[RMDB]
This 207-nucleotide RNA was probed chemically with 2A3 and DMS. For 2A3, 3,039 sequencing reads were counted. Source: RMDB library OK3TST, as collected in RNAgym. Values cover nucleotides 27 to 156.
RNA sequence: GGGAACGACUCGAGUAGAGUCGAAAACAUGGUAUGGCCUCGCAUCCGGCCUACCGACAGAAUCAACAACUUGGGAUGCGGUGGGCGAGAGCCCUAAGAAGGAGUCUCCUCGCCUGGGGAGCUCCGUAUGACUUAAUGUAUUACCAGGCGGAUACAACGAGUAAUUAGGAUUCGUCCUAAUUACUCGAAAAGAAACAACAACAACAAC
Reactivity to 2A3 in 0.01 (KOAc 150mM, MgCl2 10mM, bicine 150mM(pH8.5), 24C), signal-to-noise 4, nucleotides 027 to 156: c030a060u120g000g010u100a130u300g000g000c000c000u010c020g000c000a000u000c020c000g000g000c000c010u010a010c000c000g030a010c030a050g180a060a100u220c070a070a120c010a020a050c060u130u150g080g000g000a000u000g000c010g010g050u050g000g000g000c020g010a050g000a020g050c000c000c000u010a010a000g080a020a060g010g000a000g010u060c010u000c060c000u020c000g000c000c010u010g000g000g000g000a000g010c000u000c010c000g000u040a080u030g040a020c030u080u130a120a010u220g120u230a130u050u120a060c000c010a010g010g010c180g000g000a070u150a110c070a100a020
Reactivity to DMS in 0.01 (KOAc 150mM, MgCl2 10mM, bicine 150mM(pH8.5), 24C), signal-to-noise 1, nucleotides 027 to 156: c050a200u020g020g010u000a050u000g060g010c010c040u010c090g040c090a050u010c010c020g050g030c030c000u020a020c030c000g030a300c100a060g000a120a140u000c080a070a120c080a090a120c130u000u000g080g020g050a050u010g010c000g020g070u000g000g020g060c000g010a300g000a230g020c010c010c040u000a020a050g020a110a180g030g000a060g010u010c020u000c040c000u000c000g000c070c040u070g010g000g020g000a040g000c020u000c000c020g020u000a050u000g010a110c100u010u010a050a050u020g050u000a190u010u000a070c050c000a040g000g000c010g010g000a090u020a100c020a100a300